[RMDB]
RNA sequence: GGGAACGACUCGAGUAGAGUCGAAAAGGGAUGCACUUCGUGGCGGUCUGUCCUCCUGCCCUCUCUCCGGAUGCGGAGUUCCUCGCACGGGCAGAGGAGGUGGCGCGGGGGACGGGGGCCCGUAUCGAGAUAUGAAAAGAUUCGUCUUUUCAUAUCUAAAAGAAACAACAACAACAAC
Reactivity to DMS in 0.01 (KOAc 150mM, MgCl2 10mM, bicine 150mM(pH8.5), 24C), signal-to-noise 9, nucleotides 027 to 126: g010g010g010a080u010g010c080a090c110u010u000c100g020u010g010g010c030g000g010u000c030u000g010u000c010c000u000c010c020u000g010c020c000c010u000c040u000c010u000c010c000g010g010a190u010g020c010g000g010a140g010u010u010c070c030u000c030g010c040a080c060g010g000g010c190a070g000a070g010g010a080g010g010u010g010g010c080g030c090g010g000g000g000g000a030c030g000g000g000g000g010c020c010c020g010u000a040u000c110g010
Reactivity to 2A3 in 0.01 (KOAc 150mM, MgCl2 10mM, bicine 150mM(pH8.5), 24C), signal-to-noise 9, nucleotides 027 to 126: g060g020g010a040u100g040c050a030c120u100u070c140g080u150g030g010c020g020g250u010c010u020g020u010c000c000u010c000c010u040g010c000c010c000u020c000u000c000u000c000c010g120g050a150u100g040c010g000g030a110g050u080u080c020c040u040c010g000c010a030c030g020g070g000c080a020g010a030g060g120a030g020g050u140g040g040c070g000c080g020g020g000g000g000a010c010g000g000g000g020g000c010c010c010g010u040a090u130c060g030
The record gives the reactivity of an RNA of 177 nucleotides to DMS and 2A3. Source: RMDB library OK2TST, as collected in RNAgym. The reactions ran in a buffer of 150 mM KOAc, 10 mM MgCl2 and 150 mM bicine (pH 8.5), at 24 C. For 2A3, 23,579 sequencing reads were counted.